[RMDB]
RNA sequence: GGGAACGACUCGAGUAGAGUCGAAAAAUUGUCCCCGGGGACACACACAGGAGUUGCUCUCACGUCGUUGCCUCUUGGUAUCUUUGAAGCCUGUCUGUUAGAACCCGCCUCUUUGAUGGUAGGGCAGUCACUCCGGUACAUUCGUGUACCGGAGUGAAAAAGAAACAACAACAACAAC
Reactivity to DMS in 0.01 (KOAc 150mM, MgCl2 10mM, bicine 150mM(pH8.5), 24C), signal-to-noise 1, nucleotides 027 to 126: a130u000u000g020u010c030c010c000c070g000g000g000g000a110c110a090c100a110c080a020c110a060g040g000a050g030u030u010g030c060u000c020u000c040a120c090g020u000c040g020u000u000g010c010c010u000c100u000u000g030g000u000a080u000c030u010u030u010g000a040a150g020c020c000u010g030u010c080u010g000u000u000a130g010a160a110c020c010c010g000c020c000u000c040u020u000u000g010a030u000g000g000u020a060g020g000g000c010a040g010

Annotation: An RNA of 177 nucleotides, treated with DMS and read out base by base. DMS adducts were read by reverse transcription with MarathonRT. The RNA was probed in 150 mM KOAc, 10 mM MgCl2 and 150 mM bicine (pH 8.5) at 24 C.